[RMDB]
RNA sequence: GGGAACGACUCGAGUAGAGUCGAAAAACGAUGCCCGCUAGGUGUCACGACGGUCGUGAAUCGUCGUGGUGCCGUAGGGAAGCCGCGAAGCGGGCCACUUGGGAAGUACGGCCGCAAGGCUGAAACUAUGCAAUAAGUUCUUCGGAACUUAUUGCAUAAAAGAAACAACAACAACAAC
Reactivity to 2A3 in 0.01 (KOAc 150mM, MgCl2 10mM, bicine 150mM(pH8.5), 24C), signal-to-noise 3, nucleotides 027 to 126: a010c080g020a070u160g000c020c010c000g000c010u020a040g000g010u020g000u030c000a010c000g030a020c010g010g010u010c060g220u170g210a220a010u030c000g000u000c000g000u000g000g010u000g000c000c010g010u000a000g000g000g000a010a010g090c010c010g040c070g060a050a000g000c000g000g000g020c000c000a050c020u050u060g060g030g020a030a020g080u070a070c030g010g000c000c010g030c050a070a050g000g000c000u010g010a010a000a000c030u000
Reactivity to DMS in 0.01 (KOAc 150mM, MgCl2 10mM, bicine 150mM(pH8.5), 24C), signal-to-noise 2, nucleotides 027 to 126: a100c080g010a140u020g000c000c000c020g030c010u000a210g050g030u000g010u000c000a010c000g000a000c000g030g020u000c040g010u010g010a120a020u000c000g010u010c000g030u000g000g000u000g010c010c000g010u020a100g000g000g010a150a150g020c020c000g000c120g020a050a190g000c000g000g000g000c020c070a040c100u000u010g020g030g000a110a120g000u040a250c050g000g000c010c000g000c220a090a140g030g030c020u000g000a120a060a030c120u000